[RMDB]
RNA sequence: GGGAACGACUCGAGUAGAGUCGAAAAUAUAAGUCUUUGUGUGUCUUAAAAUGGGACCUCCUGCAAUAGAGAGCCUCAUCCAUUUAGUGCAAGGGCAGGGACCCAGGCUGUGCUCCGAUGGAGCAGGAAUCCACUGCUGCUGUCAGCCCUCUAUCGCACCGUUAGGUGUAUUCGUACACCUAACGGUAAAAGAAACAACAACAACAAC
Reactivity to 2A3 in 0.01 (KOAc 150mM, MgCl2 10mM, bicine 150mM(pH8.5), 24C), signal-to-noise 4, nucleotides 027 to 156: u230a010u050a090a030g020u000c050u040u110u040g060u020g010u010g040u020c030u040u110a110a070a070a090u080g010g000g010a060c020c000u020c040c010u040g020c040a080a120u180a030g090a020g010a010g070c030c030u060c040a140u060c050c020a080u070u080u080a070g020u050g050c050a070a060g040g020g000c020a050g060g010g060a100c010c000c010a010g030g010c020u040g040u060g050c000u010c050c040g170a140u230g010g000a010g000c010a020g010g120a030a050u070c020c000a060c030u030g000c020u030g040c000u020g070u060c010a020g010c000c020c000u000c030u080a100u160c100g010c030
Reactivity to DMS in 0.01 (KOAc 150mM, MgCl2 10mM, bicine 150mM(pH8.5), 24C), signal-to-noise 2, nucleotides 027 to 156: u000a140u000a090a090g020u010c010u000u010u000g060u000g030u000g010u000c030u000u000a040a030a100a090u020g000g020g010a080c040c000u000c010c030u000g040c080a130a120u000a090g020a070g000a100g000c010c020u010c050a090u000c040c040a160u000u000u000a140g020u000g020c030a070a080g000g010g030c040a100g000g000g020a140c030c010c010a120g010g050c050u000g050u000g000c030u020c020c020g030a120u020g030g040a040g020c030a060g000g000a070a130u000c030c020a090c070u000g000c030u020g000c000u010g000u000c030a120g000c020c020c030u000c040u000a090u000c040g020c170

Structure probing data (2A3 and DMS) for a 207-nucleotide construct. High DMS reactivity at an A or C suggests that its Watson-Crick edge is free. Conditions: 150 mM KOAc, 10 mM MgCl2 and 150 mM bicine (pH 8.5), 24 C. The DMS profile rests on 4,674 reads. Source: RMDB library OK3TST, as collected in RNAgym.